[RMDB]
RNA sequence: GGGAACGACUCGAGUAGAGUCGAAAAUCGGGCUUCCGACUUGUGACCCCAUAUCAGCCAAUACGAACGCGGCACGGCAUGGGCCGCAUUCCAUGCUAGGUGGCCCCUAUGACAAGGGCUGAACAAGGGGCCACGCGAUAUUCGUAUCGCGUGGCCCAAAAGAAACAACAACAACAAC
Reactivity to 2A3 in 0.01 (KOAc 150mM, MgCl2 10mM, bicine 150mM(pH8.5), 24C), signal-to-noise 2, nucleotides 027 to 126: u030c040g230g000g000c170u130u040c020c000g000a040c060u160u010g110u130g090a210c060c130c000c000a070u170a010u120c000a040g050c000c000a130a150u150a080c040g080a110a000c140g060c110g010g110c000a000c000g000g020c020a000u000g050g010g020c050c000g130c000a000u130u090c000c050a000u000g000c000u010a080g030g300u000g230g010c000c010c000c010u220a210u150g070a000c000a050a020g050g000g090c000u000g020a000a070c050a040a170g000

Chemical mapping of a 177-nucleotide RNA with 2A3.
The 2A3 profile rests on 451 reads.
Conditions: 150 mM KOAc, 10 mM MgCl2 and 150 mM bicine (pH 8.5), 24 C.